[RMDB]
An RNA of 177 nucleotides, treated with 2A3 and read out base by base. 2A3 adducts were read by reverse transcription with SuperScript II with manganese. The RNA was probed in 150 mM KOAc, 10 mM MgCl2 and 150 mM bicine (pH 8.5) at 24 C. Reactivities are given for positions 27 through 126. For 2A3, 320 sequencing reads were counted.

RNA sequence: GGGAACGACUCGAGUAGAGUCGAAAAAUGUAGUCCACCUUCAUCUGAGCGAAGGCAGUGUGUGCUGCAACCGUCCACGGCAGCUCCCCUGUUGUGUCUAAUGCAAAGUGGGGACGAAGGUAGUGGAGCGACUGCGUCAGUUCGCUGACGCAGUCGCAAAAGAAACAACAACAACAAC
Reactivity to 2A3 in 0.01 (KOAc 150mM, MgCl2 10mM, bicine 150mM(pH8.5), 24C), signal-to-noise 1, nucleotides 027 to 126: a000u040g110u040a020g000u000c000c000a030c050c000u150u000c000a230u090c000u000g120a000g080c000g240a030a190g020g080c050a060g000u260g000u070g000u140g160c000u000g000c010a010a020c010c050g060u000c000c000a030c060g070g070c000a070g020c070u000c020c000c000c000u000g000u230u000g000u000g000u000c000u190a220a000u150g010c000a140a140a000g100u120g040g000g000g000a080c100g060a160a050g220g130u110a070g140u020g000g020a000